The record gives the reactivity of an RNA of 177 nucleotides to 2A3 and DMS. The reactions ran in a buffer of 150 mM KOAc, 10 mM MgCl2 and 150 mM bicine (pH 8.5), at 24 C. DMS (dimethyl sulfate) methylates the pairing face of unpaired adenines and cytosines. For DMS, 4,709 sequencing reads were counted. Reactivities are given for positions 27 through 126. It was measured as part of the RMDB library OK1LIB.

RNA sequence: GGGAACGACUCGAGUAGAGUCGAAAACAUAAUCACUUGUUCUCUAAUUAGGGACUUGCAUGAAUGGCCACACGAGGGUUUAACUGUCUCUUACUUUUAAUCAGUGAAAUUGACCUCCCCGUGAAGAAUUAUCUGGGACUUUCGAGUCCCAGAUAAUAAAAGAAACAACAACAACAAC
Reactivity to 2A3 in 0.01 (KOAc 150mM, MgCl2 10mM, bicine 150mM(pH8.5), 24C), signal-to-noise 6, nucleotides 027 to 126: c040a050u160a090a110u110c020a010c050u020u080g150u300u000c020u000c000u030a220a300u150u230a110g010g000g010a010c000u020u030g020c070a060u100g040a090a030u050g020g030c010c000a020c020a000c060g030a200g020g020g050u030u090u140a070a060c030u030g030u010c000u000c000u070u060a060c030u000u130u090u280a130a080u130c010a010g020u020g070a090a140a140u080u100g030a050c000c030u000c000c010c000c020g020u060g070a070a050g040a050
Reactivity to DMS in 0.01 (KOAc 150mM, MgCl2 10mM, bicine 150mM(pH8.5), 24C), signal-to-noise 3, nucleotides 027 to 126: c070a050u030a050a090u040c060a060c050u020u030g020u010u030c020u000c010u030a170a090u040u000a080g000g000g000a010c010u000u020g020c140a040u000g000a070a080u000g020g020c010c040a070c030a040c070g000a130g030g010g020u000u030u000a100a070c080u010g000u020c030u000c070u010u020a040c050u010u010u020u030a100a100u040c100a020g010u040g020a050a070a080u020u020g020a060c080c110u000c010c020c000c060g000u010g000a040a120g000a110